[RMDB]
Structure probing data (2A3 and DMS) for a 170-nucleotide construct. For 2A3 the reverse transcriptase was SuperScript II with manganese. High DMS reactivity at an A or C suggests that its Watson-Crick edge is free. Source: RMDB library 15KLIB, as collected in RNAgym. The reactions ran in a buffer of 150 mM KOAc, 10 mM MgCl2 and 150 mM bicine (pH 8.5), at 24 C.
RNA sequence: GGGAACGACUCGAGUAGAGUCGAAAAUAUGCGCACUACACAUACUGAUAUUGGUGUCUACAUUAGUAUGUCACUUGUAUUAGUCAUUGUAGUGAAGAGAUUGUACAACCCAUCACUUUCUAACUUUGCGGCUGACAGUUCGCUGUCAGCAAAAGAAACAACAACAACAAC
Reactivity to 2A3 in 0.01 (KOAc 150mM, MgCl2 10mM, bicine 150mM(pH8.5), 24C), signal-to-noise 9, nucleotides 027 to 129: u250a090u100g110c060g000c000a000c000u000a000c000a010c000a020u060a010c010u000g000a000u010a000u020u050g010g000u000g000u000c000u000a020c010a120u130u060a120g030u020a030u300g030u050c000a010c000u010u020g010u000a010u000u000a000g000u010c100a020u010u020g000u020a000g000u010g000a030a020g040a000g010a020u070u110g040u070a070c020a060a090c030c000c000a040u100c030a000c020u090u180u060c070u060a130a150c040u110u110u130g060c090g110
Reactivity to DMS in 0.01 (KOAc 150mM, MgCl2 10mM, bicine 150mM(pH8.5), 24C), signal-to-noise 6, nucleotides 027 to 129: u060a000u060g050c140g000c020a020c020u000a000c010a040c230a110u040a030c000u000g040a030u000a000u020u030g050g000u020g010u000c030u020a020c020a230u070u050a160g050u000a030u110g020u000c030a030c000u020u030g020u020a010u050u000a020g000u000c150a000u000u000g030u020a000g000u060g030a060a070g010a070g040a050u010u010g010u030a110c100a100a170c020c030c020a130u000c100a070c090u020u010u020c090u040a160a130c150u040u020u040g020c050g010